[RMDB]
RNA sequence: GGGAACGACUCGAGUAGAGUCGAAAAUAACGAACUUAAAUAAAAGCCCUGUUGUUUAGCGUAUCGUUGCACUUGUCUGGUGGGAUUGUGGCAUUAAUUUGCCUGCUCAUCUAGGCAGUGGACAUAUAAAUACUUCUCUUCGGAGAAGUAAAAAGAAACAACAACAACAAC
Reactivity to DMS in 0.01 (KOAc 150mM, MgCl2 10mM, bicine 150mM(pH8.5), 24C), signal-to-noise 3, nucleotides 027 to 129: u000a000a110c190g000a100a150c090u020u020a000a110a180u080a120a050a090a120g020c000c000c000u000g090u080u070g010u020u060u020a150g030c260g050u070a000u000c000g050u000u000g030c010a010c000u050u070g040u040c050u000g020g090u040g000g010g070a090u020u090g000u040g010g090c000a040u010u030a050a050u050u040u030g060c020c050u050g030c040u020c040a010u030c000u060a020g040g020c020a040g000u020g040g010a000c100a060u010a070u000a070a060a140
Reactivity to 2A3 in 0.01 (KOAc 150mM, MgCl2 10mM, bicine 150mM(pH8.5), 24C), signal-to-noise 2, nucleotides 027 to 129: u180a040a010c090g030a070a030c140u110u140a110a090a050u290a150a110a080a000g070c000c040c000u010g000u000u000g000u000u000u100a120g010c110g010u030a010u000c060g020u040u100g180c030a000c020u030u100g010u050c000u000g110g000u010g000g000g020a090u140u190g160u080g110g000c010a030u110u000a090a110u070u100u000g000c000c000u000g020c010u070c010a090u020c070u080a050g020g000c010a010g000u000g000g000a010c000a040u020a000u010a000a130a020
Conditions: 150 mM KOAc, 10 mM MgCl2 and 150 mM bicine (pH 8.5), 24 C. This 170-nucleotide RNA was probed chemically with DMS and 2A3. It was measured as part of the RMDB library 15KLIB.